[RMDB]
RNA sequence: GGGAACGACUCGAGUAGAGUCGAAAACGCUCUUCGGAGCGGUGAUGUCCUAAGUCACGGAUAACCAUGAGAGGGGGAGUGAUUCGGAAACGAAUCACUUUGAUCCUACCCACCUCAUGGGAAACCGUGAUAUGGAGCCGGUGACAUUCGUGUCAAAUUUCUUAGACUCUUUCGAGAGUCUAAGAAAAAAAGAAACAACAACAACAAC
Reactivity to DMS in 0.01 (KOAc 150mM, MgCl2 10mM, bicine 150mM(pH8.5), 24C), signal-to-noise 2, nucleotides 027 to 156: c000g040c010u000c010u000u000c300g010g000a070g020c000g000g010u000g010a080u000g100u000c020c000u020a050a210g040u020c010a020c020g020g000a030u000a120a300c000c000a030u000g020a030g010a170g000g020g020g040g000a020g000u000g000a010u000u030c020g030g000a210a120a280c020g000a020a010u000c000a010c010u000u000u020g030a160u010c070c050u000a140c000c000c020a110c010c010u010c010a020u000g000g000g000a080a180a130c010c010g030u000g010a000u010a080u000g020g000a110g050c020c060g020g020u010g010a110c020a140u000u010c150g000u010g010u000c030a040a090a200
Reactivity to 2A3 in 0.01 (KOAc 150mM, MgCl2 10mM, bicine 150mM(pH8.5), 24C), signal-to-noise 2, nucleotides 027 to 156: c000g020c000u040c010u000u070c300g160g000a020g000c080g010g010u080g050a150u180g010u050c000c000u030a110a050g030u000c000a010c010g000g010a070u120a180a030c000c000a000u000g020a020g050a050g000g000g010g040g000a000g000u020g010a020u000u030c000g020g060a110a080a000c030g010a000a000u030c000a000c020u010u060u100g000a000u020c000c000u050a230c050c000c000a120c000c000u000c000a000u000g020g000g000a120a000a000c000c000g020u000g000a000u000a000u030g000g010a020g060c070c090g090g020u080g000a000c000a060u110u170c240g100u100g000u080c000a000a050a150